The record gives the reactivity of an RNA of 207 nucleotides to 2A3 and DMS. For DMS, 3,102 sequencing reads were counted. Values cover nucleotides 27 to 156. 2A3 adducts were read by reverse transcription with SuperScript II with manganese.
RNA sequence: GGGAACGACUCGAGUAGAGUCGAAAACGUACGUGGAGACACGUACGACGAGACUUCGGUCUCGAAUCGCGCGAACUGGUGCAGCGCGCGCGCGAGGCGUCGGUGGUCGGCGAGCCCACGGACGCAAAAAAUCGCGCGAAAAUAAAUAGCACUAGAACUAUAUGCGUAUGUUCGCAUACGCAUAUAGAAAAGAAACAACAACAACAAC
Reactivity to 2A3 in 0.01 (KOAc 150mM, MgCl2 10mM, bicine 150mM(pH8.5), 24C), signal-to-noise 2, nucleotides 027 to 156: c010g000u000a000c000g010u000g000g020a060g000a030c000a000c020g000u000a010c000g000a020c000g000a000g000a000c000u080u170c280g100g000u020c010u000c000g000a030a100u130c010g000c000g000c000g000a090a070c000u010g000g000u000g000c000a010g000c000g010c000g020c030g000c000g000c000g000a020g040g000c010g010u000c110g160g010u010g010g000u030c030g000g140c190g040a040g010c010c010c000a010c000g070g000a000c000g000c000a070a040a000a000a000a190u010c000g000c000g000c000g000a000a000a010a010u210a010a030a020u100a010g010c000a000c000u000a010g010a030a020
Reactivity to DMS in 0.01 (KOAc 150mM, MgCl2 10mM, bicine 150mM(pH8.5), 24C), signal-to-noise 2, nucleotides 027 to 156: c020g050u010a000c010g030u000g010g000a300g000a300c000a000c000g030u000a000c010g010a160c000g000a130g010a030c000u010u010c250g030g010u000c000u000c000g010a030a050u010c000g030c000g020c030g000a050a060c000u010g010g000u000g030c090a090g030c010g010c000g020c030g030c000g030c000g000a100g000g020c000g010u000c020g030g070u000g020g000u000c010g030g030c120g020a240g030c280c000c000a000c010g000g000a060c020g050c020a000a010a050a030a040a050u010c000g040c000g040c000g030a030a040a100a070u010a070a110a090u000a150g010c010a030c010u000a030g010a200a300